RNA sequence: GGGAACGACUCGAGUAGAGUCGAAAAUGUAGAUUUUACGACUGUCUUUCGUGGUCCUGGAAAUUUUCUUUUGCCUAAUGCAACAAAUUUCCCUCGGUCAACCACAACCGAUCAGGUUUACAUGGUGCGCGAGAUGAGGGUUCGCCCUCAUCUCGCGAAAAGAAACAACAACAACAAC
Reactivity to 2A3 in 0.01 (KOAc 150mM, MgCl2 10mM, bicine 150mM(pH8.5), 24C), signal-to-noise 1, nucleotides 027 to 126: u200g000u010a040g040a160u000u000u040u180a050c060g040a030c000u000g030u040c000u000u060u000c040g050u090g010g010u070c040c040u030g000g060a040a040a030u090u040u000u120c000u000u110u090u050g000c000c000u130a160a000u200g000c010a010a020c000a050a200a000u010u030u050c000c050c040u120c110g010g000u010c040a080a050c050c000a000c030a000a000c010c050g070a110u090c020a060g020g010u000u020u150a110c000a070u060g200g000u220g060
Chemical mapping of a 177-nucleotide RNA with 2A3. The RNA was probed in 150 mM KOAc, 10 mM MgCl2 and 150 mM bicine (pH 8.5) at 24 C. The 2A3 profile rests on 530 reads. Values cover nucleotides 27 to 126.